Conditions: 150 mM KOAc, 10 mM MgCl2 and 150 mM bicine (pH 8.5), 24 C. The record gives the reactivity of an RNA of 177 nucleotides to DMS and 2A3. In probing experiments dimethyl sulfate is read out at A N1 and C N3, which are open when not base-paired.
RNA sequence: GGGAACGACUCGAGUAGAGUCGAAAACGUCUGGUGGAACCUAACUGUGAAACGCCUCGACUUGAGCGAGCACGGCCUGGUAUUCCUGGCCGUAUGCGCCGAACGGUUUCGCGAUGGCGGCCGACACUCAGUGCGGAUUGUUCGCAAUCCGCACUGAAAAAGAAACAACAACAACAAC
Reactivity to DMS in 0.01 (KOAc 150mM, MgCl2 10mM, bicine 150mM(pH8.5), 24C), signal-to-noise 1, nucleotides 027 to 126: c090g000u000c040u040g000g000u000g020g050a020a090c020c080u000a000a120c030u000g010u020g040a100a140a120c070g000c040c040u010c050g040a120c130u030u000g040a100g060c010g000a060g010c220a060c000g000g040c000c000u010g000g040u000a150u000u010c010c000u000g000g100c000c000g010u000a000u020g010c000g140c000c060g050a060a170c190g010g000u000u000u000c050g040c000g000a080u100g030g000c070g040g010c030c000g000a130c050a110c120
Reactivity to 2A3 in 0.01 (KOAc 150mM, MgCl2 10mM, bicine 150mM(pH8.5), 24C), signal-to-noise 5, nucleotides 027 to 126: c030g000u010c040u150g090g020u010g040g030a040a020c020c000u070a110a120c060u090g040u020g090a120a090a090c050g030c010c030u070c040g120a200c040u120u260g060a070g070c000g000a010g030c030a000c020g010g000c010c020u060g010g010u170a280u260u270c000c000u000g000g020c020c000g010u030a010u130g020c040g000c010c000g020a040a050c060g020g020u010u040u060c000g000c030g040a060u150g030g000c010g000g000c000c010g070a070c050a030c030
As a SHAPE reagent, 2A3 marks flexible, mostly unpaired nucleotides at the ribose 2'-OH. Reactivities are given for positions 27 through 126.